[RMDB]
RNA sequence: GGGAACGACUCGAGUAGAGUCGAAAAGAUAUGGAGCAACUACCCACCAUACCGGCCCGUGUCGGAAACGACACGAGCGCUGGUAUGAGGUUGCUCCUAAGUCAAAAGUGCGCCUUCGGGCGCACAAGAAAUGUAAUUUCUUCGGAAAUUACAUUUCAAAAGAAACAACAACAACAAC
Reactivity to 2A3 in 0.01 (KOAc 150mM, MgCl2 10mM, bicine 150mM(pH8.5), 24C), signal-to-noise 2, nucleotides 027 to 126: g070a040u260a180u300g000g000a030g030c000a010a010c000u210a300c000c010c010a000c000c000a000u000a000c010c000g020g040c020c010c000g000u000g010u000c000g030g060a100a050a140c020g000a000c020a000c000g030a120g000c280g010c010u020g000g000u010a000u010g000a000g010g000u000u000g010c010u000c000c000u020a010a000g140u050c110a070a150a020a050g000u010g000c010g030c000c030u060u170c260g130g010g000c010g050c010a010c000a000a000
Reactivity to DMS in 0.01 (KOAc 150mM, MgCl2 10mM, bicine 150mM(pH8.5), 24C), signal-to-noise 3, nucleotides 027 to 126: g000a080u010a270u010g000g010a000g020c010a020a010c010u000a130c030c010c020a300c090c000a000u000a000c000c010g020g020c000c010c000g020u000g000u010c000g010g010a070a060a160c000g010a010c000a010c000g010a070g010c180g020c000u010g000g010u010a000u000g000a060g040g000u010u000g000c000u000c000c000u000a000a100g000u010c200a060a080a140a150g000u000g000c000g010c000c000u000u010c180g040g010g010c000g000c010a000c020a020a050